[RMDB]
RNA sequence: GGGAACGACUCGAGUAGAGUCGAAAAUCGGUUGCACCGAAUGCUUCGACGCGGGGAGAUGAUACGUUGACAACUCCUGCAGCUGCUCAAGUUGAAGAUCAAGCAUCGGAGGAUCAGCACAUCGAGGCGUACAUGGUUCGUUCGCGAACCAUGUACGAAAAGAAACAACAACAACAAC
Reactivity to 2A3 in 0.01 (KOAc 150mM, MgCl2 10mM, bicine 150mM(pH8.5), 24C), signal-to-noise 2, nucleotides 027 to 126: u010c000g090g020u030u090g000c070a070c110c020g010a130a110u030g040c050u020u040c090g050a030c000g000c020g010g060g020g000a020g010a020u070g030a030u060a220c150g170u100u180g080a050c040a100a050c040u000c000c000u020g070c030a030g030c000u030g020c030u080c120a040a060g010u000u050g100a040a020g000a110u100c030a070a020g020c010a020u040c000g010g100a060g000g060a080u050c030a000g010c000a010c040a100u020c020g000a000g090g000
Reactivity to DMS in 0.01 (KOAc 150mM, MgCl2 10mM, bicine 150mM(pH8.5), 24C), signal-to-noise 3, nucleotides 027 to 126: u010c030g000g020u000u000g030c060a300c090c030g010a040a070u000g010c050u000u000c040g010a020c080g000c040g010g000g000g020a090g010a110u000g000a140u020a050c150g000u010u000g020a130c030a060a080c020u000c030c050u000g000c040a070g030c030u000g020c130u000c100a040a060g000u000u010g000a170a130g010a100u000c050a090a100g040c010a050u000c050g000g000a080g010g010a030u020c060a080g000c010a090c210a040u010c000g030a040g030g000

This 177-nucleotide RNA was probed chemically with 2A3 and DMS.